Chemical mapping of a 177-nucleotide RNA with DMS and 2A3.
[RMDB]
RNA sequence: GGGAACGACUCGAGUAGAGUCGAAAAGGGUAGGCGACAAUGAUAGUCACGAGAACAGCUAAACACAAGUAUGUCAUGGACUCCGUUGCGCAAUCGUCGUGAUCGUGCCGGUUGCAAAGUGUAUGUGUAUACUUGGACGGUUCGCCGUCCAAGUAUAAAAAGAAACAACAACAACAAC
Reactivity to DMS in 0.01 (KOAc 150mM, MgCl2 10mM, bicine 150mM(pH8.5), 24C), signal-to-noise 3, nucleotides 027 to 126: g040g040g020u020a020g020g000c020g000a070c030a120a110u020g000a070u020a090g000u000c040a060c080g000a110g030a060a080c090a080g060c020u000a090a070a090c150a050c130a070a060g000u000a020u030g000u000c070a050u000g000g000a040c050u000c110c100g000u010u000g030c120g000c030a070a010u030c050g000u020c030g020u030g000a040u010c080g010u020g000c100c000g010g000u000u010g010c040a060a040a100g010u010g000u020a030u010g020u010g000
Reactivity to 2A3 in 0.01 (KOAc 150mM, MgCl2 10mM, bicine 150mM(pH8.5), 24C), signal-to-noise 2, nucleotides 027 to 126: g080g020g010u040a030g000g000c030g000a010c060a020a070u200g030a060u090a040g020u030c000a020c060g060a060g040a100a000c010a030g050c080u140a050a140a000c040a010c000a060a120g050u100a110u200g070u050c080a040u070g070g000a030c000u020c010c020g100u050u060g080c110g000c040a000a050u050c020g070u000c000g020u020g110a140u040c070g010u050g010c020c020g000g010u030u040g040c030a030a030a040g040u030g020u070a080u080g070u030g010
Record summary
The RNA was probed in 150 mM KOAc, 10 mM MgCl2 and 150 mM bicine (pH 8.5) at 24 C. 2A3 adducts were read by reverse transcription with SuperScript II with manganese. The 2A3 profile rests on 1,268 reads.